[RMDB]
RNA sequence: GGGAACGACUCGAGUAGAGUCGAAAAGAUUGCCGUUCGCGGCAAUCAAAAAUCCUAAGUCCGUGCGCAAGCUAGCUGAGGUAUCGGAAACGAUACUACCCACCAGCUAGAACUACUUGGCACGGAUAUGGAAAAAACGUCGACUUCGGUCGACGAAGUACGUUAUAUGAUUCGUCAUAUAACGUACAAAAGAAACAACAACAACAAC
Reactivity to 2A3 in 0.01 (KOAc 150mM, MgCl2 10mM, bicine 150mM(pH8.5), 24C), signal-to-noise 4, nucleotides 027 to 156: g010a000u000u000g000c010c010g020u030u090c300g000c010g130g000c000a000a000u010c000a000a010a010a000a010u010c020c000u030a090a010g050u000c010c010g010u020g000c160g000c260a010a010g000c000u010a000g000c000u010g010a010g020g000u000a000u000c000g040g050a090a040a030c010g000a000u010a010c010u050a100c050c060c010a060c000c000a000g000c010u000a000g000a010a010c040u180a030c000u020u000g010g000c000a000c000g000g000a000u010a000u010g000g020a020a110a010a010a000a030c010g010u010c000g010a010c000u040u020c180g100g010u000c000g000a010c010g000a020a000
Reactivity to DMS in 0.01 (KOAc 150mM, MgCl2 10mM, bicine 150mM(pH8.5), 24C), signal-to-noise 2, nucleotides 027 to 156: g040a000u010u000g020c000c020g050u010u020c300g040c030g000g040c000a010a000u010c000a000a110a120a090a120u000c010c010u000a110a260g000u000c000c000g020u060g010c010g010c030a030a030g020c020u000a010g000c000u000g000a150g020g000u000a000u000c000g030g000a210a140a190c020g010a020u000a020c000u010a010c000c000c040a300c180c010a030g010c010u000a040g010a020a180c020u000a130c000u000u010g020g010c050a000c010g060g000a000u010a020u000g000g000a000a080a070a050a070a110c000g020u000c010g010a030c010u000u020c260g040g030u000c000g020a010c010g000a010a150